[RMDB]
RNA sequence: GGGAACGACUCGAGUAGAGUCGAAAAUGGCUUGGCUGCACUGUCUGACUUCAGAGCACCUAUAGCUCCGUGCAGCUGUCAGCCUAUGUGUGCAUUAAGUACAGUAACUCCGUAGGUGCCAGGGUGGAAAUGAAACAUUUUACCAGUGUGUAUGCCAUAUUAUAGGCACUUUCGAGUGCCUAUAAUAAAAAGAAACAACAACAACAAC
Reactivity to DMS in 0.01 (KOAc 150mM, MgCl2 10mM, bicine 150mM(pH8.5), 24C), signal-to-noise 2, nucleotides 027 to 156: u000g020g010c020u010u010g010g040c020u000g000c010a010c000u000g030u020c040u020g000a110c140u000u000c060a120g000a120g020c020a090c130c080u010a110u000a150g000c000u000c020c040g000u000g000c000a040g020c000u000g000u000c070a110g000c020c010u010a060u000g020u000g020u000g000c010a140u000u000a070a200g000u000a060c030a140g030u010a050a060c030u000c010c040g010u010a070g020g020u000g040c000c040a070g020g000g030u010g010g000a070a050a100u010g000a100a120a100c060a130u010u000u000u000a070c010c020a220g040u010g000u000g030u030a050u000g010c020c020a130
Reactivity to 2A3 in 0.01 (KOAc 150mM, MgCl2 10mM, bicine 150mM(pH8.5), 24C), signal-to-noise 2, nucleotides 027 to 156: u080g010g010c040u080u160g060g030c000u020g010c010a010c020u030g020u240c080u090g220a250c070u100u090c150a060g000a010g000c040a080c050c110u190a100u070a220g030c020u040c040c030g010u010g020c000a030g000c000u000g020u040c010a000g000c000c000u010a050u030g150u020g000u000g040c030a020u150u160a170a020g020u010a080c020a030g050u100a050a040c030u000c030c020g050u080a030g040g000u030g070c050c030a020g030g010g020u020g000g060a070a000a020u140g020a120a060a020c040a090u040u110u050u080a010c010c050a060g010u020g020u000g000u100a050u100g000c030c000a030